[RMDB]
Chemical mapping of a 177-nucleotide RNA with DMS and 2A3.
For 2A3 the reverse transcriptase was SuperScript II with manganese.
Values are in units of 0.01, from 0 to 300, in steps of 10.
Source: RMDB library TTRDES, as collected in RNAgym.
The 2A3 profile rests on 3,618 reads.
RNA sequence: GGGAACGACUCGAGUAGAGUCGAAAAAAAGAUAUGGAAUCCGUUCGAGCUUGGAUUUAUGGGAGGACCGUGGUCGGAAACGACCACUAGUACUCCCAUUGUCAGCUCGUAGGAUUCCUAAGUCAAACUUUAGAAUAAGCUUCGGCUUAUUCUAAAGAAAAGAAACAACAACAACAAC
Reactivity to DMS in 0.01 (KOAc 150mM, MgCl2 10mM, bicine 150mM(pH8.5), 24C), signal-to-noise 3, nucleotides 027 to 126: a080a120a070g000a050u010a300u010g000g000a010a000u000c000c010g000u000u010c010g020a020g010c010u000u010g020g000a020u000u010u000a000u000g020g000g000a010g010g000a090c300c240g000u010g020g010u000c010g000g010a130a120a270c000g000a010c000c000a000c010u000a030g010u000a120c010u000c000c000c000a000u000u000g000u000c000a060g000c000u010c000g020u000a120g010g010a010u000u000c000c000u000a010a080g010u000c030a110a100a160
Reactivity to 2A3 in 0.01 (KOAc 150mM, MgCl2 10mM, bicine 150mM(pH8.5), 24C), signal-to-noise 3, nucleotides 027 to 126: a000a000a060g090a070u140a070u180g010g020a010a020u020c020c060g240u230u200c050g020a000g030c060u210u290g230g010a070u300u300u140a010u080g010g000g000a020g040g000a000c000c050g020u010g000g000u000c000g000g040a110a070a040c000g010a010c010c000a000c000u010a010g000u000a000c000u000c040c000c000a000u000u000g010u000c000a010g010c000u000c000g000u000a010g000g000a010u010u000c000c010u020a060a010g050u010c020a130a030a110